[RMDB]
RNA sequence: GGGAACGACUCGAGUAGAGUCGAAAAGUUUGGAUGCCACCGUGACGGCUCAAUCACACAAGUGCCAACGAUAACGAGGCGCUCGCUAUUGCUGCGUAACUGACGGCCUGACGGUCUGACGUUACAAAAAACGAAAAGUGGUUCGCCACUUUUCGAACGAACCAAAGAAGUUCGCUUCUUUGGUUCGAAAAGAAACAACAACAACAAC
Reactivity to DMS in 0.01 (KOAc 150mM, MgCl2 10mM, bicine 150mM(pH8.5), 24C), signal-to-noise 2, nucleotides 027 to 156: g000u000u000u010g030g010a100u000g010c030c020a080c060c070g080u010g010a120c130g000g020c030u020c050a100a150u000c050a100c090a100c070a100a100g020u000g000c010c010a030a150c090g000a090u000a090a100c070g000a200g000g010c060g020c040u000c030g050c020u010a030u010u010g000c000u000g020c030g000u000a010a090c020u010g000a300c300g040g010c010c010u010g040a160c190g040g050u000c010u010g040a300c260g020u000u020a120c030a010a000a070a030a050a160c010g010a020a020a030a040g010u000g000g000u010u000c300g030c000c000a030c000u000u000u000u000c000g010a040a080
Reactivity to 2A3 in 0.01 (KOAc 150mM, MgCl2 10mM, bicine 150mM(pH8.5), 24C), signal-to-noise 5, nucleotides 027 to 156: g030u060u000u080g090g030a140u090g050c040c030a050c040c050g050u060g060a070c090g020g010c000u020c050a050a070u120c030a020c020a020c010a140a050g020u020g040c010c010a110a040c100g090a150u100a230a040c060g020a070g060g000c020g040c010u030c020g030c040u070a080u160u220g010c090u080g010c040g010u010a030a030c000u020g020a000c030g010g000c010c020u140g120a070c100g000g000u020c010u000g010a000c020g010u030u010a020c000a010a060a010a000a010a000c010g010a000a000a000a000g000u000g040g010u050u090c190g020c020c010a000c000u000u000u000u010c000g000a020a010